[RMDB]
RNA sequence: GGGAACGACUCGAGUAGAGUCGAAAAAGGGCUGGAUUCGUCCAGCCCUGCACAUUCGUACGCAACGAAGCGUACGUCAUAACGCAAAUGACGUAAAGCGUAGAACCACGGACUUCGGUCCGUGGAACCAUCAUCGCAAAUUCGUUUGCGAUGAUGGAAAAGAAACAACAACAACAAC
Reactivity to 2A3 in 0.01 (KOAc 150mM, MgCl2 10mM, bicine 150mM(pH8.5), 24C), signal-to-noise 5, nucleotides 027 to 126: a010g010g000g000c000u000g000g010a020u030u050c120g030u020c040c000a000g000c000c000c000u000g000c010a020c010a090u090u080c010g010u040a010c000g000c060a160a060c170g130a180a050g050c010g030u000a010c000g000u000c000a070u060a230a040c050g000c120a070a110a130u120g050a050c040g040u060a050a030a080g010c020g010u030a040g060a090a040c000c000a000c000g000g000a000c000u030u070c250g060g000u010c000c000g000u000g010g000a000a000
Reactivity to DMS in 0.01 (KOAc 150mM, MgCl2 10mM, bicine 150mM(pH8.5), 24C), signal-to-noise 4, nucleotides 027 to 126: a020g000g010g010c000u000g000g010a010u000u020c170g020u000c000c000a000g010c010c000c000u010g010c120a060c150a190u000u000c020g000u000a040c040g010c020a070a060c130g000a080a090g010c140g010u010a010c000g000u000c040a020u010a050a080c180g010c240a080a060a040u000g010a020c040g000u000a040a060a170g000c040g000u000a110g010a100a210c010c000a000c000g000g010a020c000u000u010c120g000g020u000c000c010g010u000g000g000a000a030

Source: RMDB library M2PK50, as collected in RNAgym.
Chemical mapping of a 177-nucleotide RNA with 2A3 and DMS.
The DMS profile rests on 4,593 reads.
For DMS the reverse transcriptase was MarathonRT.
2A3 adducts were read by reverse transcription with SuperScript II with manganese.